[RMDB]
RNA sequence: GGGAACGACUCGAGUAGAGUCGAAAAAACGUUGCAUGAUCGUAAAACAUGCCCGGCUUACCGCGAGCCGCCUUUGAAAGAAAGGUUUACACGGACUCUGUUGCGUUACGCACGUACCUAACUUGUGAAAACGGCAUCUUGUUCGCAAGAUGCCGAACACUGAAGAAUGCUUCGGCAUUCUUCAGUGAAAAGAAACAACAACAACAAC
Reactivity to DMS in 0.01 (KOAc 150mM, MgCl2 10mM, bicine 150mM(pH8.5), 24C), signal-to-noise 2, nucleotides 027 to 156: a120a070c020g060u000u000g010c020a040u000g010a110u000c010g010u020a060a080a050a050c000a030u000g000c010c060c010g010g000c010u000u000a090c050c010g000c050g030a110g020c000c000g000c000c020u000u000u000g030a120a150a280g020a050a030a030g000g010u020u010u000a100c060a070c060g000g000a160c100u000c090u000g000u000u000g000c020g010u000u000a090c100g040c030a040c090g000u010a080c010c030u000a090a090c050u000u000g020u000g000a050a020a090a160c010g030g030c000a010u000c020u000u000g010u000u000c250g030c020a030a010g020a020u000g030c030c000g060a010a020
Reactivity to 2A3 in 0.01 (KOAc 150mM, MgCl2 10mM, bicine 150mM(pH8.5), 24C), signal-to-noise 6, nucleotides 027 to 156: a000a000c000g000u000u000g000c000a000u000g020a050u190c030g070u200a100a070a020a000c000a000u000g000c000c000c000g000g000c000u030u050a070c030c010g020c050g010a000g000c000c000g020c000c000u050u010u020g090a080a060a020g050a010a010a010g030g000u010u040u050a020c040a010c010g120g040a200c040u040c080u150g090u110u050g010c010g030u040u060a050c130g010c020a000c020g020u050a060c000c020u040a090a160c040u110u090g040u050g120a040a030a030a030c010g000g000c000a000u000c000u010u020g010u040u030c080g000c090a000a000g000a000u000g000c000c000g000a000a000
The record gives the reactivity of an RNA of 207 nucleotides to DMS and 2A3. The DMS profile rests on 3,795 reads. It was measured as part of the RMDB library M2RFOK. For DMS the reverse transcriptase was MarathonRT.